[RMDB]
RNA sequence: GGGAACGACUCGAGUAGAGUCGAAAAAGUAGUUCGCUACUGUUCAGUCCUAAGUCCGUCGGGAGUCCACUAAGAACGAGGAUCGCUUCGGAAACGAAGCGGGAGUUCGAAGUGGACGACGAUCGACGGAUAUGGAGUCCUGGAUCUUCGGAUCCAACAGAAAUUUGCUAUUCGUAGCAAAUUUCUGAAAAGAAACAACAACAACAAC
Reactivity to 2A3 in 0.01 (KOAc 150mM, MgCl2 10mM, bicine 150mM(pH8.5), 24C), signal-to-noise 2, nucleotides 027 to 156: a000g030u040a010g010u030u100c300g010c140u010a010c010u020g100u100u300c110a100g110u000c000c000u030a080a010g020u000c010c000g000u010c000g000g010g000a020g020u000c010c000a000c010u020a070a010g000a000a000c000g010a200g090g000a020u020c000g000c010u000u000c000g040g000a090a050a040c000g010a000a000g000c000g000g000g000a010g010u000u000c000g010a050a000g000u000g000g000a000c000g000a000c000g020a030u020c010g000a000c000g000g000a000u010a010u030g000g000a070g060u070c050c060u080g000g000a000u020c020u030u060c240g130g010a000u000c000c010a010a010
Reactivity to DMS in 0.01 (KOAc 150mM, MgCl2 10mM, bicine 150mM(pH8.5), 24C), signal-to-noise 2, nucleotides 027 to 156: a040g030u000a000g020u000u010c190g040c000u020a030c010u000g000u010u000c080a140g040u010c000c000u020a100a170g000u000c000c000g040u000c000g020g020g000a250g030u000c000c000a040c000u010a010a300g000a010a010c010g030a110g010g020a100u010c010g010c000u000u020c010g030g020a190a100a300c000g000a010a010g040c000g030g020g000a120g000u000u010c000g000a300a050g040u010g000g010a000c020g010a030c110g010a130u000c010g000a030c010g010g020a000u000a040u000g000g000a140g010u010c030c040u000g000g000a010u010c010u000u030c300g030g020a030u000c010c000a020a230